The data come from the RNA Mapping Database (RMDB), library OK2TRN.
Structure probing data (2A3 and DMS) for a 177-nucleotide construct.
RNA sequence: GGGAACGACUCGAGUAGAGUCGAAAAAUUGAAAACAAGUAGCUGGGAAUCUUUGAAGGGGAACCUGCUGUUAAACUCAAUAAUGGUCAGUGGGGAAACUAGAUUUUCAUGGUACAUCCAUCACCACUGAUACCAAGAGGUUCGCCUCUUGGUAUCAAAAAGAAACAACAACAACAAC
Reactivity to 2A3 in 0.01 (KOAc 150mM, MgCl2 10mM, bicine 150mM(pH8.5), 24C), signal-to-noise 1, nucleotides 027 to 126: a020u020u100g010a070a000a000a010c060a110a040g040u020a010g190c000u020g020g040g000a000a080u020c000u120u220u250g130a260a080g030g040g020g000a010a020c010c000u020g020c030u010g000u050u110a110a130a030c020u070c100a070a250u200a290a140u180g040g050u040c000a000g000u000g030g030g000g000a000a000a000c040u010a030g000a080u060u040u000u060c030a030u130g000g080u030a000c000a050u020c040c000a000u140c020a020c060c060a000c060
Reactivity to DMS in 0.01 (KOAc 150mM, MgCl2 10mM, bicine 150mM(pH8.5), 24C), signal-to-noise 1, nucleotides 027 to 126: a120u010u000g000a160a080a090a150c120a100a190g020u010a040g020c050u000g000g000g000a030a050u010c020u000u000u010g010a040a040g000g020g030g000a110a300c030c000u010g000c100u000g000u020u000a050a050a030c090u000c150a040a160u000a110a100u000g000g010u000c010a020g020u010g000g000g040g000a060a170a080c120u010a040g010a040u000u000u000u000c020a000u020g000g000u010a020c060a040u000c040c030a050u020c080a080c160c060a130c210
Description: The 2A3 profile rests on 761 reads. For DMS, 683 sequencing reads were counted. The RNA was probed in 150 mM KOAc, 10 mM MgCl2 and 150 mM bicine (pH 8.5) at 24 C. Values cover nucleotides 27 to 126.